[RMDB]
RNA sequence: GGGAACGACUCGAGUAGAGUCGAAAACUGUUCUGCACGCAUGGUUUGGAGAGAGUGGUGCAAUGUCUGUGGCAUAAAAGAUGUUGUUCUACAAGGCUUAAAAGCUUGUUGUUACGUGGGUGUGCAAUAAGUACCCCCUUCGGGGGGUACAAAAGAAACAACAACAACAAC
Reactivity to 2A3 in 0.01 (KOAc 150mM, MgCl2 10mM, bicine 150mM(pH8.5), 24C), signal-to-noise 1, nucleotides 027 to 129: c000u040g150u120u000c010u160g030c000a000c120g020c020a170u050g090g180u070u030u010g000g150a060g000a000g000a000g010u000g000g000u000g090c050a000a000u020g170u090c080u000g030u000g000g000c030a040u060a120a250a040a000g130a050u090g000u030u010g000u000u000c000u000a110c100a000a100g130g010c060u170u160a000a070a000a000g000c000u000u000g000u040u000g000u040u070a000c020g010u200g020g040g020u100g010u000g070c000a040a040u000a130a000
Reactivity to DMS in 0.01 (KOAc 150mM, MgCl2 10mM, bicine 150mM(pH8.5), 24C), signal-to-noise 3, nucleotides 027 to 129: c090u020g010u030u040c050u030g000c100a030c090g070c060a120u070g000g000u000u000u020g030g080a210g040a130g030a080g050u030g040g030u000g010c070a110a000u040g010u030c090u070g020u000g000g020c090a140u010a000a120a160a120g030a110u040g010u020u020g070u000u000c120u060a130c150a100a030g110g050c020u000u070a110a140a140a110g000c000u030u000g020u000u040g030u000u010a050c060g030u050g010g010g040u040g070u020g020c090a130a050u000a060a160
This 170-nucleotide RNA was probed chemically with 2A3 and DMS. For 2A3 the reverse transcriptase was SuperScript II with manganese. For DMS, 5,312 sequencing reads were counted. Source: RMDB library 15KLIB, as collected in RNAgym. The reactions ran in a buffer of 150 mM KOAc, 10 mM MgCl2 and 150 mM bicine (pH 8.5), at 24 C. DMS adducts were read by reverse transcription with MarathonRT.